[RMDB]
RNA sequence: GGGAACGACUCGAGUAGAGUCGAAAAUAUAGUUCGCUGACCCCUCAAAUUAUGGUCACUCAGCUUAGGAUCCGCCUAAACCGCUAUACUUGGUCCAUGGUCUUGGAGUGUCUUCUUACAUUGGUGGUACCAACUUGAUUUUCGAAUCAAGUUGGUAAAAAGAAACAACAACAACAAC
Reactivity to 2A3 in 0.01 (KOAc 150mM, MgCl2 10mM, bicine 150mM(pH8.5), 24C), signal-to-noise 4, nucleotides 027 to 126: u140a000u030a030g050u070u050c070g040c100u060g110a090c020c030c020c000u050c080a090a130a040u260u150a110u170g060g010u030c000a000c020u050c020a040g010c020u030u040a040g010g020a020u030c010c070g040c010c020u050a090a050a020c020c010g070c050u110a100u050a260c060u080u130g040g000u000c020c030a060u060g050g000u020c040u070u070g080g000a040g000u050g020u000c010u040u040c010u040u080a100c060a160u050u100g060g000u060g020g050
Reactivity to DMS in 0.01 (KOAc 150mM, MgCl2 10mM, bicine 150mM(pH8.5), 24C), signal-to-noise 7, nucleotides 027 to 126: u010a090u010a080g010u010u000c080g010c070u010g010a130c050c030c030c080u010c080a070a080a110u010u010a080u010g010g000u000c040a080c080u010c050a080g010c030u000u000a120g000g000a090u010c050c120g010c030c030u000a040a090a100c140c100g010c070u000a060u000a050c120u000u000g000g010u000c020c030a080u010g010g010u000c070u010u000g010g010a090g020u000g000u000c050u000u000c050u010u010a070c120a080u010u000g010g010u000g010g020
An RNA of 177 nucleotides, treated with 2A3 and DMS and read out base by base. The data come from the RNA Mapping Database (RMDB), library OK2TRN. The RNA was probed in 150 mM KOAc, 10 mM MgCl2 and 150 mM bicine (pH 8.5) at 24 C. The 2A3 profile rests on 3,142 reads.